[RMDB]
RNA sequence: GGGAACGACUCGAGUAGAGUCGAAAAGAUAUGGAGACGGCUAGGGAGCGAUGAUGUCGGAAACGACAUAUCGCGAGGAUCUAGCGUCUCCUAAGUCAAAACUGCUGCUUGUUCGCAAGCAGCAGAACUAUCACAGCACGUUCGCGUGCUGUGAUAGAAAAGAAACAACAACAACAAC
Reactivity to 2A3 in 0.01 (KOAc 150mM, MgCl2 10mM, bicine 150mM(pH8.5), 24C), signal-to-noise 2, nucleotides 027 to 126: g020a010u010a010u100g020g000a000g010a020c090g230g280c000u020a010g030g080g100a300g010c020g030a010u300g080a020u020g010u020c000g020g010a030a010a020c000g010a000c000a000u020a010u000c010g000c020g070a130g030g040a110u000c000u000a000g000c000g000u000c000u010c000c000u000a010a000g000u000c000a000a040a160a170c020u020g040c010u030g010c030u040u040g060u130u140c300g030c210a000a020g000c010a000g000c010a000g010a010a010
Reactivity to DMS in 0.01 (KOAc 150mM, MgCl2 10mM, bicine 150mM(pH8.5), 24C), signal-to-noise 2, nucleotides 027 to 126: g000a030u010a270u000g010g010a000g010a010c000g020g060c020u010a000g000g010g020a080g020c000g020a000u010g020a030u000g020u010c000g020g010a070a060a150c000g010a000c000a020u010a030u000c000g010c000g030a050g000g020a090u000c000u000a010g010c010g020u000c000u010c000c000u000a000a070g010u010c020a160a070a090a160c020u000g020c000u000g010c010u010u000g000u000u020c300g060c010a000a000g000c000a010g010c010a000g010a020a160
Structure probing data (2A3 and DMS) for a 177-nucleotide construct.
For DMS the reverse transcriptase was MarathonRT.
High DMS reactivity at an A or C suggests that its Watson-Crick edge is free.
2A3 adducts were read by reverse transcription with SuperScript II with manganese.